[RMDB]
RNA sequence: GGGAACGACUCGAGUAGAGUCGAAAAAGCAGGACCGGGUUACGACGCGGUCCUGCAGCAAUGAGUAGAAGCGGUCAAAUUUGGUGUCGAGUUCCAACAAACCAAAUUCGGGCAUUGCUCACUGCAAAAAACUCUCUUUAGUUCGCUAAAGAGAGAAGAAAGUAUACGGCUUCGGCCGUAUACUUUCAAAAGAAACAACAACAACAAC
Reactivity to 2A3 in 0.01 (KOAc 150mM, MgCl2 10mM, bicine 150mM(pH8.5), 24C), signal-to-noise 1, nucleotides 027 to 156: a000g000c000a000g010g000a010c020c010g010g160g000u110u040a130c210g030a030c040g040c000g240g000u020c010c000u000g020c000a000g000c000a000a000u010g000a000g000u020a020g020a200a040g000c070g020g070u040c020a050a040a040u000u020u030g010g000u060g120u190c190g080a060g110u130u150c100c010a060a020c040a060a110a010c010c010a000a020a000u030u010c020g020g020g000c000a010u000u000g010c000u000c020a020c020u050g000c000a000a000a000a020a050a070c040u020c000u020c000u030u000u010a010g010u040u030c230g050c150u000a000a000a000g000a000g000a000g010a040a000
This 207-nucleotide RNA was probed chemically with 2A3. The 2A3 profile rests on 590 reads. Reactivities are given for positions 27 through 156. The reactions ran in a buffer of 150 mM KOAc, 10 mM MgCl2 and 150 mM bicine (pH 8.5), at 24 C.